[RMDB]
RNA sequence: GGGAACGACUCGAGUAGAGUCGAAAAGAUAUGGAUCUGAAUAGCUAGCCUGUCGGAAACGAUGAAGGCUUGGACCUAUCAGAUCCUAAGUCAAACCUUGGUGCAGCGUUCGCGCUGCACCAAGGAAGCUUCAGAUUAAGUUCGCUUAAUCUGAAGCAAAAGAAACAACAACAACAAC
Reactivity to DMS in 0.01 (KOAc 150mM, MgCl2 10mM, bicine 150mM(pH8.5), 24C), signal-to-noise 1, nucleotides 027 to 126: g010a020u000a260u010g010g000a030u000c000u010g000a060a040u000a000g010c120u000a060g020c010c000u020g000u000c020g000g010a070a070a170c000g000a020u010g000a130a010g040g010c000u000u000g030g020a070c250c020u000a010u010c010a010g000a000u000c000c000u000a000a060g000u000c040a120a190a240c010c010u000u000g000g030u000g000c000a000g000c010g080u010u000c230g000c050g020c000u010g000c010a000c000c000a010a020g000g000a060a050
Reactivity to 2A3 in 0.01 (KOAc 150mM, MgCl2 10mM, bicine 150mM(pH8.5), 24C), signal-to-noise 2, nucleotides 027 to 126: g010a000u040a030u090g000g010a000u010c020u000g020a250a060u020a020g060c000u010a010g000c000c000u010g020u000c000g030g010a040a070a060c010g000a010u100g280a250a030g000g000c040u030u080g010g030a030c000c010u000a010u000c000a000g000a000u000c000c010u020a070a020g030u020c050a140a060a190c020c000u000u000g070g020u000g000c070a030g000c020g060u120u210c300g020c010g060c160u000g070c010a010c040c000a020a000g010g020a000a020